[RMDB]
RNA sequence: GGGAACGACUCGAGUAGAGUCGAAAAUGUCCAUCUUAAUAUGAUACUUUCAAACAAUAUUAUUACUCCAGAUGAGUUCAAGAGUGAUUUAGAUACUUCCUCACAACAAGUCCAUACCGCAACACUACAAUCAUUCGAGAAUCAAGCGAAUAUUGCGCCGAAUAUAGAGGUUCGCCUCUAUAUUCGGAAAAGAAACAACAACAACAAC
Reactivity to 2A3 in 0.01 (KOAc 150mM, MgCl2 10mM, bicine 150mM(pH8.5), 24C), signal-to-noise 4, nucleotides 027 to 156: u130g030u000c020c020a060u030c040u120u220a230a150u110a180u210g070a090u040a160c030u120u190u100c130a100a100a100c030a060a050u040a070u190u030a030u110u090a100c030u070c050c020a060g040a150u070g050a070g130u080u100c040a040a020g000a010g040u050g000a040u010u070u100a050g010a050u050a080c030u080u060c030c020u080c020a050c020a100a130c030a070a030g040u000c050c010a020u030a110c050c040g020c040a040a060c040a020c120u120a040c040a010a050u070c020a030u030u030c020g010a010g080a090a090u130c070a100a010g080c020g050a030a030u080a010u090u090g050c050g010
Reactivity to DMS in 0.01 (KOAc 150mM, MgCl2 10mM, bicine 150mM(pH8.5), 24C), signal-to-noise 1, nucleotides 027 to 156: u000g030u010c030c000a130u000c070u020u020a120a070u030a080u000g000a050u000a020c060u040u010u020c020a130a150a120c030a060a040u000a120u000u010a120u000u000a090c040u010c010c000a110g020a090u040g000a200g000u000u000c040a050a300g040a040g030u000g050a120u000u000u030a070g000a130u000a020c040u000u000c010c010u000c080a170c040a060a070c050a020a040g030u010c040c010a060u010a070c030c060g000c090a050a060c050a090c040u000a000c070a000a010u000c040a040u020u000c030g040a300g010a130a070u000c140a120a100g020c030g000a030a080u000a050u000u040g020c040g010